[RMDB]
Background: Source: RMDB library OK1LIB, as collected in RNAgym. Structure probing data (DMS and 2A3) for a 177-nucleotide construct. The reactions ran in a buffer of 150 mM KOAc, 10 mM MgCl2 and 150 mM bicine (pH 8.5), at 24 C. For DMS, 5,988 sequencing reads were counted. The 2A3 profile rests on 5,245 reads. For DMS the reverse transcriptase was MarathonRT.
RNA sequence: GGGAACGACUCGAGUAGAGUCGAAAAACGUCACCUAAAUUCUUGGACAUUGUCCAAAAGGCCUCUGAGAAGUCCGAGCUGGUGUCGCGCGGACCUCCAUCCCAGUCUUCUCUGCAGCCCGACGGCGAACCGUCUAUCUGUUCGCAGAUAGACGGUUAAAAGAAACAACAACAACAAC
Reactivity to DMS in 0.01 (KOAc 150mM, MgCl2 10mM, bicine 150mM(pH8.5), 24C), signal-to-noise 3, nucleotides 027 to 126: a080c100g000u020c050a070c030c000u010a040a100a100u030u020c060u000u020g000g000a030c030a130u040u040g040u020c000c030a010a040a100a100g000g010c070c050u000c060u000g010a080g000a050a060g010u000c010c050g010a050g020c070u000g000g000u020g000u010c070g030c050g050c040g030g000a060c040c010u020c010c030a070u000c000c010c020a090g000u020c050u000u000c010u000c020u010g000c030a080g000c010c010c030g000a120c090g020g020c100g000
Reactivity to 2A3 in 0.01 (KOAc 150mM, MgCl2 10mM, bicine 150mM(pH8.5), 24C), signal-to-noise 6, nucleotides 027 to 126: a000c040g060u040c040a090c040c010u110a150a160a130u210u080c070u050u040g000g000a010c030a300u110u300g000u020c000c000a010a040a010a030g050g000c040c010u040c060u070g070a060g020a150a020g040u020c010c020g000a010g010c020u070g010g110u090g030u090c030g000c010g000c010g070g010a050c000c000u010c020c010a060u050c010c000c000a010g050u000c020u070u010c020u000c020u050g020c020a020g030c010c000c030g060a050c030g020g030c040g010